RNA sequence: GGGAACGACUCGAGUAGAGUCGAAAAGUCCUGAUUAUCAGAUUCGCUGGAGUGCAGGCCGGAUGAUACAAGCCCUGUCCUCCCAUGACGCUGGUGAGGGGCAGUGUGGGGAGGAAGGGAAAGCAGGCACUAGCGUUCUGUUCGCAGAACGCUAGUGAAAAGAAACAACAACAACAAC
Reactivity to DMS in 0.01 (KOAc 150mM, MgCl2 10mM, bicine 150mM(pH8.5), 24C), signal-to-noise 1, nucleotides 027 to 126: g020u000c000c010u000g000a110u010u010a080u000c090a060g000a230u010u000c110g020c060u020g010g000a070g040u000g020c060a100g010g000c010c040g030g010a070u000g000a030u000a070c240a070a180g010c010c010c010u000g000u000c000c000u000c010c000c010a070u000g000a050c030g010c020u020g020g000u000g000a080g020g000g000g040c020a000g020u000g050u010g050g000g000g010a000g000g000a300a030g000g000g010a000a040a170g000c060a040g000g000
Reactivity to 2A3 in 0.01 (KOAc 150mM, MgCl2 10mM, bicine 150mM(pH8.5), 24C), signal-to-noise 2, nucleotides 027 to 126: g050u030c000c000u010g020a120u020u200a070u150c040a030g120a220u080u100c030g000c080u080g050g070a130g050u110g010c040a030g030g010c030c020g040g010a050u040g010a000u090a160c080a080a090g050c000c000c000u060g300u060c010c010u010c010c000c010a010u160g070a010c020g000c020u010g040g070u110g080a070g010g000g010g020c020a010g000u000g000u020g010g000g000g000a000g000g000a000a020g000g000g000a000a030a060g030c040a040g000g090